This 177-nucleotide RNA was probed chemically with DMS. High DMS reactivity at an A or C suggests that its Watson-Crick edge is free. The DMS profile rests on 2,469 reads.
[RMDB]
RNA sequence: GGGAACGACUCGAGUAGAGUCGAAAAAAAAAGAUAUGGACUUGAGGGAGCUUAAGGACCGAAGAACUUUAUCGGAAACGAUAAAGGGAGGUCACUUAAGCGAAGAACUCAAGUCCUAAGUCAAAAAUCUAAGUACAUUCUUCGGAAUGUACUUAGAAAAAGAAACAACAACAACAAC
Reactivity to DMS in 0.01 (KOAc 150mM, MgCl2 10mM, bicine 150mM(pH8.5), 24C), signal-to-noise 2, nucleotides 027 to 126: a040a090a040a130a090g000a070u010a300u000g000g020a000c000u000u000g000a020g000g030g010a130g030c000u000u000a000a000g020g020a010c000c010g010a060a140g020a110a110c000u000u000u010a000u000c000g040g010a130a110a170c010g000a010u000a000a010a010g010g000g000a070g010g000u010c000a100c000u000u000a000a000g010c000g000a070a090g000a100a120c000u000c000a000a000g000u000c000c000u000a010a050g020u020c020a050a060a130a120a070